[RMDB]
RNA sequence: GGGAACGACUCGAGUAGAGUCGAAAAGAUCGCGUCGCGGGUCUGAUUACCGGCUUGUCCCCCGCCGCGUCAGGCUUGGACAAAGGCCUUAUCCCCCUCUCCGGGCCUUUGUCCCCACUUUAAAGUCACCAUCCUCUCAUUUCGAUGAGAGGAUGGUAAAAGAAACAACAACAACAAC
Reactivity to 2A3 in 0.01 (KOAc 150mM, MgCl2 10mM, bicine 150mM(pH8.5), 24C), signal-to-noise 2, nucleotides 027 to 126: g060a080u130c050g010c050g090u040c070g000c010g030g000g000u000c020u030g010a050u050u070a090c010c000g000g000c010u080u130g060u090c000c010c000c010c020g000c010c000g010c000g010u000c010a000g040g000c020u070u070g020g010a020c000a000a030a000g000g010c000c010u010u040a080u080c000c000c000c000c030u110c010u020c050c000g000g000g000c000c000u000u000u010g000u000c000c000c010c000a030c000u150u100u120a120a150a020g060u040c050
Reactivity to DMS in 0.01 (KOAc 150mM, MgCl2 10mM, bicine 150mM(pH8.5), 24C), signal-to-noise 2, nucleotides 027 to 126: g000a070u040c070g000c090g030u020c080g030c100g080g000g010u040c020u010g000a010u020u020a160c300c020g000g040c020u030u020g030u010c000c040c000c010c300g000c000c010g130c100g000u000c050a030g020g000c050u030u030g030g010a000c000a000a030a010g000g010c010c030u000u080a120u000c000c050c010c040c040u010c090u000c110c160g010g000g000c000c010u000u010u000g000u000c000c000c110c050a070c110u000u010u020a080a040a080g020u020c100